An RNA of 177 nucleotides, treated with DMS and 2A3 and read out base by base. 2A3 adducts were read by reverse transcription with SuperScript II with manganese.
RNA sequence: GGGAACGACUCGAGUAGAGUCGAAAAAACUUCGGAUUUCGUCAUCACUGAAGAGAAGGCUGCGAACUCUCUAGCACAGGCCGUUGAAUCAUACGAAAAGAAAAGCAGGGAAAACUUCAAUAAUGCACAGUAAGAACUGAUUCGUCAGUUCUUACUGAAAAGAAACAACAACAACAAC
Reactivity to DMS in 0.01 (KOAc 150mM, MgCl2 10mM, bicine 150mM(pH8.5), 24C), signal-to-noise 5, nucleotides 027 to 126: a070a040c050u000u000c040g010g010a090u000u000u010c080g010u000c070a040u010c070a070c060u020g010a090a060g010a110g010a070a090g010g010c050u010g000c030g000a070a110c090u000c010u000c030u000a100g010c040a080c090a080g020g000c060c030g010u010u000g010a130a080u000c070a070u010a110c080g000a070a050a070a080g000a050a040a080a080g010c030a030g000g000g010a060a040a080a070c080u000u000c060a050a080u010a050a070u010g010c130a150
Reactivity to 2A3 in 0.01 (KOAc 150mM, MgCl2 10mM, bicine 150mM(pH8.5), 24C), signal-to-noise 3, nucleotides 027 to 126: a010a010c050u080u040c030g090g030a090u060u080u100c040g050u030c020a040u080c010a040c050u050g050a060a000g020a010g030a070a030g050g000c000u020g040c030g000a090a080c000u020c010u010c010u050a020g030c010a030c010a080g040g070c030c020g000u030u060g090a040a030u060c030a030u050a130c050g030a100a060a000a090g060a030a100a010a000g020c000a030g000g030g130a000a050a050a060c030u110u090c060a050a080u120a160a080u160g070c080a020
For DMS the reverse transcriptase was MarathonRT.